An RNA of 207 nucleotides, treated with 2A3 and DMS and read out base by base. The DMS profile rests on 1,777 reads. Conditions: 150 mM KOAc, 10 mM MgCl2 and 150 mM bicine (pH 8.5), 24 C.
[RMDB]
RNA sequence: GGGAACGACUCGAGUAGAGUCGAAAAGAAAGAAAGAAAGCUGACCCUUAUGCUGACGGAUCUUGUGGAGCACCACAGUGCAGAAGGGGAGAGAAGCUUUAAUGCCGACCGUCUGGGCAGCCUUGAAAAAACGGAUUCUUCUUCGGAAGAAUCCGAACAAAUUUCGUAACUUCGGUUACGAAAUUUGAAAAGAAACAACAACAACAAC
Reactivity to 2A3 in 0.01 (KOAc 150mM, MgCl2 10mM, bicine 150mM(pH8.5), 24C), signal-to-noise 2, nucleotides 027 to 156: g030a020a040a050g070a060a070a010g060a020a130a020g010c020u050g190a240c020c010c020u050u080a030u060g040c010u030g020a040c050g020g020a070u090c040u100u100g020u020g020g010a080g070c090a130c090c000a010c010a080g040u030g060c000a020g000a100a030g020g000g100g010a020g010a000g010a020a000g000c000u080u090u040a110a080u080g000c020c010g040a050c010c010g040u010c070u050g000g020g020c020a020g000c010c080u030u060g070a110a050a010a000a000a000c010g010g000a000u000u000c000u000u000c000u020u050c080g020g000a010a000g000a000a000u010c000c000g000a000a000
Reactivity to DMS in 0.01 (KOAc 150mM, MgCl2 10mM, bicine 150mM(pH8.5), 24C), signal-to-noise 1, nucleotides 027 to 156: g000a180a110a060g000a200a100a190g020a040a010a030g020c030u000g000a140c010c000c040u020u000a040u000g000c000u030g030a090c080g030g010a090u000c080u000u020g110u000g020g000a180g050c160a080c030c060a050c000a070g000u000g060c000a080g000a060a050g000g020g000g020a250g000a070g020a040a100g020c010u000u000u000a060a100u000g000c010c050g000a140c030c040g000u000c090u000g020g000g080c030a060g010c030c030u030u010g000a000a040a080a050a110a220c020g000g000a030u010u000c000u000u000c000u000u000c300g010g010a040a020g010a030a010u000c000c000g000a010a060